[RMDB]
RNA sequence: GGGAACGACUCGAGUAGAGUCGAAAACUUGAACAUCAACGUUGUUAUCAGCAUGCUCUCCACCGUUUAAUAUGUUCAUCAUUGGAACAGGUAAUUGUUUAGCAUUUACUCCACCUAGGUAUUGGAACAUCAGUCCACGAUUCGUCGUGGACUGAUGAAAAGAAACAACAACAACAAC
Reactivity to DMS in 0.01 (KOAc 150mM, MgCl2 10mM, bicine 150mM(pH8.5), 24C), signal-to-noise 2, nucleotides 027 to 126: c020u030u030g030a040a130c140a060u040c090a170a070c190g000u000u000g000u010u000a130u030c030a090g000c060a090u020g000c040u020c000u000c020c010a060c060c020g060u000u000u020a030a010u030a050u030g020u000u070c000a030u000c180a210u010u060g020g010a050a020c040a080g000g000u000a010a030u000u010g000u000u000u010a090g000c010a110u000u020u000a100c030u000c050c050a070c110c160u060a000g010g000u000a150u000u000g000g010a060a080
Reactivity to 2A3 in 0.01 (KOAc 150mM, MgCl2 10mM, bicine 150mM(pH8.5), 24C), signal-to-noise 3, nucleotides 027 to 126: c000u010u070g160a080a040c020a130u140c030a060a010c070g040u010u020g000u050u090a040u110c010a010g030c020a020u080g000c000u000c000u000c000c040a030c000c000g000u000u140u000a130a060u080a070u150g020u000u000c030a030u090c080a100u090u210g160g030a000a050c040a030g090g000u060a050a110u010u170g040u030u080u120a030g040c000a000u030u000u070a050c000u010c030c000a050c000c010u080a060g110g000u110a120u040u180g060g000a010a030